[RMDB]
RNA sequence: GGGAACGACUCGAGUAGAGUCGAAAAUUCUCGGGAGCUUCAGUUGUUUCCACCGGGUAGUAGCCGAAGCGACAGCGCAAAGGGGGCGAGGGGUGGUCCUGCGGGCGCGAGGAAGGACACCCGAAGACCUUUGCAAUAUGUUCGCAUAUUGCAAAGGAAAAGAAACAACAACAACAAC
Reactivity to 2A3 in 0.01 (KOAc 150mM, MgCl2 10mM, bicine 150mM(pH8.5), 24C), signal-to-noise 1, nucleotides 027 to 126: u040u010c010u020c010g020g020g000a110g020c040u150u160c090a050g030u030u060g000u000u050u010c000c070a070c090c000g050g030g000u040a070g010u020a030g020c010c030g020a100a020g000c020g040a010c030a100g090c020g030c040a070a130a120g090g030g030g000g000c030g060a110g000g050g000g030u040g050g030u020c000c020u020g020c040g040g020g010c000g000c010g020a020g000g000a010a030g010g000a010c020a020c010c000c010g000a050a000g040a020
Reactivity to DMS in 0.01 (KOAc 150mM, MgCl2 10mM, bicine 150mM(pH8.5), 24C), signal-to-noise 2, nucleotides 027 to 126: u010u000c020u000c000g040g010g000a140g020c060u010u000c120a080g050u000u000g000u000u000u000c000c030a120c100c050g000g010g000u010a030g020u000a120g030c030c010g010a080a130g000c020g000a070c060a060g000c090g020c100a040a090a090g020g010g000g010g000c060g010a110g010g000g000g020u000g010g020u000c030c020u000g010c050g010g010g000c070g020c070g000a100g000g000a080a050g000g000a080c020a070c010c010c000g010a060a100g000a150